[RMDB]
RNA sequence: GGGAACGACUCGAGUAGAGUCGAAAAUAUUGUGCUUGAUUUUUCUCCUCCAUGGUUUAUAAGGGAUUAAAGUAUCCUGGAAUAAAGAGCUUCAACCCCAACAGUCCUGGAAAAAUACUUCUGAUGGGUUAGCUAGGGAAUUCGUUCCCUAGCUAACAAAAGAAACAACAACAACAAC
Reactivity to DMS in 0.01 (KOAc 150mM, MgCl2 10mM, bicine 150mM(pH8.5), 24C), signal-to-noise 1, nucleotides 027 to 126: u040a060u010u010g020u000g000c090u000u020g000a060u010u000u010u000u000c010u000c010c040u000c010c050a080u010g010g010u000u000u000a040u020a140a180g010g000g000a060u000u000a080a060a110g040u010a040u000c000c000u000g020g010a160a150u000a040a060a110g020a040g010c040u000u000c040a020a050c060c010c010c030a060a130c140a100g010u000c030c040u000g000g000a020a060a100a040a130u000a010c150u010u020c020u020g000a130u000g000g010